Conditions: 150 mM KOAc, 10 mM MgCl2 and 150 mM bicine (pH 8.5), 24 C. An RNA of 177 nucleotides, treated with DMS and read out base by base.
RNA sequence: GGGAACGACUCGAGUAGAGUCGAAAACAGUUGAUUCGCGAUGACUUCAUCUCCGAGUUGUUUGACAAGAUGAAGGCGGAGAUUCGGGGGCUGGAUUACGACGCGCGGAUGGCGGACCUGUGGCGGGUCAUCUCGCCAGAUUCGUCUGGCGAGAUGAAAAAGAAACAACAACAACAAC
Reactivity to DMS in 0.01 (KOAc 150mM, MgCl2 10mM, bicine 150mM(pH8.5), 24C), signal-to-noise 1, nucleotides 027 to 126: c070a110g010u020u030g000a100u030u000c050g010c030g020a120u010g030a200c050u000u020c000a060u000c010u010c070c020g010a100g010u000u000g000u010u000u010g000a210c150a110a100g000a040u000g000a070a070g040g000c030g000g000a110g010a060u000u000c080g040g010g000g000g020c070u010g000g010a130u000u000a120c150g030a060c150g000c060g020c060g010g000a080u000g020g040c020g000g000a080c030c040u020g000u000g020g000c080g000g000g000